[RMDB]
RNA sequence: GGGAACGACUCGAGUAGAGUCGAAAAUCAAAAUAAGAGAAGUGAAGGCUGAGAAUAGAAAGGAAAAGAAGGUAGGAUAUUGUCACUGGUUAACCGUAACCACCACCACCAAAAUAACCGUCGGUUCGCCGACGGAAAAGAAACAACAACAACAAC
Reactivity to 2A3 in 0.01 (KOAc 150mM, MgCl2 10mM, bicine 150mM(pH8.5), 24C), signal-to-noise 4, nucleotides 027 to 135: u060c010a010a010a030a050u220a100a050g050a020g010a080a030g010u050g100a070a030g070g000c090u090g070a020g060a180a000u120a050g080a070a100a030g050g010a060a080a020a040g010a010a000g000g010u020a020g010g010a010u010a010u050u110g030u010c000a010c080u020g000g000u020u030a050a030c010c010g010u010a010a000c000c000a000c000c000a010c020c000a010c010c010a100a060a010a010u100a070a040c000c000g000u010c000g000g000u010u010c160g020c020c000g000a010c000g000g000a030
Reactivity to DMS in 0.01 (KOAc 150mM, MgCl2 10mM, bicine 150mM(pH8.5), 24C), signal-to-noise 4, nucleotides 027 to 135: u020c040a050a060a070a080u020a080a100g000a080g020a050a050g030u010g010a090a060g000g020c080u010g020a110g010a090a040u040a080g020a080a070a050g000g010a030a040a100a110g010a020a040g010g020u000a030g010g000a050u010a010u010u010g020u000c030a020c190u000g000g000u010u010a060a050c020c040g010u010a090a300c010c010a030c010c020a080c060c040a080c070c070a020a020a060a040u040a090a080c000c000g010u000c000g000g000u010u020c170g020c000c000g000a010c000g000g000a010